[RMDB]
Structure probing data (DMS) for a 177-nucleotide construct. For DMS the reverse transcriptase was MarathonRT. The RNA was probed in 150 mM KOAc, 10 mM MgCl2 and 150 mM bicine (pH 8.5) at 24 C.
RNA sequence: GGGAACGACUCGAGUAGAGUCGAAAAGAUAUGGAAAUGAGGUGGGUGACAUUACUCAACAGCCUGAUGAUGUCGGAAACGACAUCCCAGGACAUGAGUUGUGUCACCCACCUCAUUUCCUAAGUCGCUACUCAUACCACUUCGGUGGUAUGAGUAGAAAAGAAACAACAACAACAAC
Reactivity to DMS in 0.01 (KOAc 150mM, MgCl2 10mM, bicine 150mM(pH8.5), 24C), signal-to-noise 3, nucleotides 027 to 126: g010a030u010a300u010g000g010a010a010a010u000g020a020g000g050u000g010g020g020u000g010a030c000a000u000u000a010c000u000c000a030a070c300a200g020c010c000u020g000a080u000g000a010u010g000u000c000g010g010a100a090a190c000g000a010c000a010u000c000c250c000a010g000g010a050c100a200u000g000a040g010u000u000g010u000g010u000c010a010c000c000c000a010c010c020u000c010a000u010u000u000c000c010u000a010a080g000u010c020g000